[RMDB]
RNA sequence: GGGAACGACUCGAGUAGAGUCGAAAAGAAAGAAAAGAAACUUCCGAUGUAGACCCGUAUUCUACGCCUGUACAACGGGUCGGUUUUAGUACAGGCGAUUUCUUCGCGCGAAAAUAGAAGAAAGAAAAUCCCACCAUUAUUUCGAUAAUGGUGGGAUAAAAGAAACAACAACAACAAC
Reactivity to DMS in 0.01 (KOAc 150mM, MgCl2 10mM, bicine 150mM(pH8.5), 24C), signal-to-noise 2, nucleotides 027 to 126: g010a130a070a200g000a110a080a110a170g010a100a060a130c040u010u020c000c000g030a070u010g000u040a080g000a150c000c000c020g010u010a060u040u040c050u010a090c010g000c000c000u000g000u010a030c010a100a080c060g000g000g040u010c020g000g020u020u020u000u010a080g010u000a010c000a000g000g000c000g000a110u000u000u000c000u000u000c000g010c220g010c260g000a070a070a080a070u020a090g010a000a020g030a050a010a010g010a030a050a080
Reactivity to 2A3 in 0.01 (KOAc 150mM, MgCl2 10mM, bicine 150mM(pH8.5), 24C), signal-to-noise 2, nucleotides 027 to 126: g020a050a110a010g070a070a040a060a040g070a050a140a010c010u040u030c000c030g060a050u060g060u160a060g040a050c040c090c000g020u020a120u070u050c020u050a080c030g010c000c020u000g020u000a010c020a040a030c100g000g020g010u000c020g000g010u040u030u050u100a000g000u000a000c000a000g000g000c010g000a010u010u000u000c000u000u000c050g020c020g000c050g100a140a200a040a070u100a020g020a010a050g000a010a100a000g090a010a100a040